[RMDB]
RNA sequence: GGGAACGACUCGAGUAGAGUCGAAAAACAGCGCCACCCUGCGUAUGGGAUGCCGAACGAGGGCGUCCUGGAAUUGGCCGAAGCAAUAUCAAUUCCAGUGGUCCUGACGAAUCCCUCUUCGCCGCGAACGUGCCUGAUCGUUCGCGAUCAGGCACGUAAAAGAAACAACAACAACAAC
Reactivity to 2A3 in 0.01 (KOAc 150mM, MgCl2 10mM, bicine 150mM(pH8.5), 24C), signal-to-noise 3, nucleotides 027 to 126: a000c030a030g030c010g000c040c030a050c000c000c010u020g010c040g090u140a110u180g010g000g010a040u100g050c030c020g080a100a080c090g050a080g000g000g030c010g070u030c000c000u050g000g000a000a000u010u010g040g000c070c100g150a120a020g020c100a030a070u070a030u300c010a010a000u050u000c000c000a010g020u070g140g010u080c030c000u030g000a010c010g020a050a080u000c000c000c000u010c020u030u050c010g030c040c010g010c040g020a040
Reactivity to DMS in 0.01 (KOAc 150mM, MgCl2 10mM, bicine 150mM(pH8.5), 24C), signal-to-noise 2, nucleotides 027 to 126: a110c060a120g030c070g000c050c050a070c040c020c000u000g000c100g000u000a150u060g010g000g000a070u010g000c050c000g000a040a050c140g000a000g000g000g000c020g000u000c120c000u000g000g000a030a000u000u000g000g010c270c150g020a120a070g000c240a210a120u040a100u000c000a030a000u000u000c000c000a020g000u070g000g000u000c060c020u000g000a090c080g000a210a100u000c070c000c020u000c070u000u000c050g030c060c040g020c040g020a130